[RMDB]
RNA sequence: GGGAACGACUCGAGUAGAGUCGAAAAAGUCACGAUACGGCUCCAGGACGAUAUCGUGCUUGACCUGCACCAUCAUCUUCUGCCCCGGCUCGGUGGUGAUGGUCGGGCGGAUGUUCUGGUUGCGGUUCAGAAUCGUCUGCGCCGUCUGGGUCGCUACCUAUGACUACUUGUUCGCAAGUAGUCAUAGAAAAGAAACAACAACAACAAC
Reactivity to DMS in 0.01 (KOAc 150mM, MgCl2 10mM, bicine 150mM(pH8.5), 24C), signal-to-noise 2, nucleotides 027 to 156: a080g010u000c030a050c020g020a080u000a040c010g040g030c010u000c050c210a140g010g000a030c010g000a090u000a040u000c010g050u000g000c070u000u000g020a080c010c010u000g010c060a060c010c000a030u010c010a050u000c030u000u000c060u000g000c010c020c030c000g040g010c040u000c080g040g050u000g050g040u000g010a040u000g010g030u000c030g000g010g000c020g030g020a080u000g000u000u000c050u010g010g010u000u000g050c020g020g020u000u000c020a060g000a110a090u000c020g010u000c010u000g020c140g040c010c020g010u020c020u010g000g020g010u000c020g010c020u000a110c090
Reactivity to 2A3 in 0.01 (KOAc 150mM, MgCl2 10mM, bicine 150mM(pH8.5), 24C), signal-to-noise 4, nucleotides 027 to 156: a010g170u160c050a000c050g010a030u030a040c000g000g010c060u140c230c110a110g070g000a000c020g010a020u030a030u050c050g050u040g020c030u040u100g030a080c000c010u040g030c080a010c030c000a030u110c000a020u010c030u170u050c070u120g050c000c000c020c050g040g000c040u060c100g060g070u120g040g050u110g050a080u090g020g000u020c000g000g000g000c010g010g010a060u050g030u110u010c040u050g000g000u060u150g000c000g000g000u020u020c000a010g020a020a030u020c010g030u010c040u060g030c080g000c050c000g020u020c010u010g000g010g000u030c010g020c020u050a060c010